[RMDB]
This 177-nucleotide RNA was probed chemically with DMS and 2A3. The data come from the RNA Mapping Database (RMDB), library TTRDES. For DMS, 3,943 sequencing reads were counted. The 2A3 profile rests on 7,332 reads.
RNA sequence: GGGAACGACUCGAGUAGAGUCGAAAAGAUAUGGACACCUGGUUGAGAGCGUAUCGGAAACGAUACAGCUCAAUGAUGCCAGGGUGUCCUAAGUCAAAACAUAACAUUCGUUCGCGAAUGUUAUGAAGUUAUGGCAUUUGUUCGCAAAUGCCAUAACAAAAGAAACAACAACAACAAC
Reactivity to DMS in 0.01 (KOAc 150mM, MgCl2 10mM, bicine 150mM(pH8.5), 24C), signal-to-noise 3, nucleotides 027 to 126: g000a020u000a030u010g000g000a010c000a040c000c000u000g000g010u000u010g010a120g020a000g010c000g000u000a000u000c000g010g000a010a010a030c000g010a010u000a000c010a090g040c000u000c000a150a100u000g010a120u010g000c020c000a010g000g020g010u000g000u000c000c000u000a010a070g020u000c010a100a100a150a300c010a000u000a010a010c000a010u000u000c010g000u010u020c300g040c020g010a010a010u000g010u000u000a010u000g000a090a130
Reactivity to 2A3 in 0.01 (KOAc 150mM, MgCl2 10mM, bicine 150mM(pH8.5), 24C), signal-to-noise 3, nucleotides 027 to 126: g000a010u030a000u030g000g000a010c010a000c020c000u030g000g130u190u300g300a110g000a000g080c000g000u000a010u000c000g000g050a010a000a010c020g000a000u000a010c040a020g030c000u000c010a020a060u300g050a050u090g010c000c000a020g070g030g000u040g000u000c010c000u000a000a000g010u000c040a010a030a040a160c010a000u010a010a000c000a000u000u010c010g040u050u080c290g010c010g210a000a000u000g000u000u000a000u020g000a060a010
The reactions ran in a buffer of 150 mM KOAc, 10 mM MgCl2 and 150 mM bicine (pH 8.5), at 24 C.